[RMDB]
RNA sequence: GGGAACGACUCGAGUAGAGUCGAAAAACGUGUUUUAUAAGUUGCAUGAUAGGUGGAACACAAAACAUAGUUCCAACUAUCGAGACAGUUCAGGUAAACGACUGGAUGGCAAGAUAGUCACAAAAUAUACAGUAUGGAUUGAUACUUUCCUAAGUUGCCCUGCUGGAAGAUUCGUCUUCCAGCAGGGAAAAGAAACAACAACAACAAC
Reactivity to 2A3 in 0.01 (KOAc 150mM, MgCl2 10mM, bicine 150mM(pH8.5), 24C), signal-to-noise 1, nucleotides 027 to 156: a000c080g010u050g000u010u010u020u070a140u030a080a090g050u040u000g140c090a100u230g060a000u000a000g050g000u000g000g040a000a000c010a000c040a080a090a290a060c080a080u080a130g000u000u000c000c000a000a000c000u000a010u000c000g000a000g030a000c000a010g010u020u000c020a000g000g100u110a180a020a000c000g000a010c060u020g000g000a020u000g000g000c030a000a090g030a120u030a000g030u020c040a000c080a070a000a030a110u130a000u050a000c000a000g080u040a110u120g030g060a040u040u130g030a000u000a100c030u000u040u050c080c050u040a000a130g010u030u070g000
This 207-nucleotide RNA was probed chemically with 2A3. The reactions ran in a buffer of 150 mM KOAc, 10 mM MgCl2 and 150 mM bicine (pH 8.5), at 24 C. Reactivities are rounded to 0.1 and cut off at 0 and 3. 2A3 is a SHAPE reagent: it acylates the 2'-hydroxyl of flexible nucleotides of all four kinds. It was measured as part of the RMDB library OK3TST. For 2A3 the reverse transcriptase was SuperScript II with manganese.